[RMDB]
RNA sequence: GGGAACGACUCGAGUAGAGUCGAAAAUUAUUGAGCGUAGAUGUCUCUGUCACGAUACGAGUAAGUGACACUCGUGUACUACUGGCGAAUGAGACAGAGACAUUAUAUGCUCGUGCCAGUCAAUAAACAUAAUUAGUCGCUUCGGCGACUAAUUAUGAAAAGAAACAACAACAACAAC
Reactivity to 2A3 in 0.01 (KOAc 150mM, MgCl2 10mM, bicine 150mM(pH8.5), 24C), signal-to-noise 2, nucleotides 027 to 126: u120u060a070u070u220g000a000g000c000g000u000a010g030a030u030g010u010c000u000c000u000g020u010c000a010c100g120a030u050a110c020g020a040g040u130a110a110g070u130g200a020c010a010c060u100c070g070u050g010u020a030c020u020a020c030u060g130g040c060g110a170a090u180g010a030g010a070c000a000g000a010g000a000c000a000u000u020a000u000a010u020g000c000u000c020g000u010g030c040c000a080g090u140c060a030a070u100a140a170a050
Reactivity to DMS in 0.01 (KOAc 150mM, MgCl2 10mM, bicine 150mM(pH8.5), 24C), signal-to-noise 2, nucleotides 027 to 126: u020u010a060u000u000g010a000g000c000g050u000a020g000a020u000g000u000c010u000c000u000g020u000c000a090c080g010a120u010a100c000g010a070g000u000a020a050g010u030g010a050c070a020c050u000c260g010u000g020u000a040c030u000a060c040u000g010g010c050g010a080a070u010g010a090g010a010c000a000g000a020g000a000c000a000u000u000a080u010a010u000g000c000u000c010g000u010g010c050c020a140g020u010c090a080a110u000a080a060a180
Chemical mapping of a 177-nucleotide RNA with 2A3 and DMS.
The 2A3 profile rests on 1,271 reads.
The RNA was probed in 150 mM KOAc, 10 mM MgCl2 and 150 mM bicine (pH 8.5) at 24 C.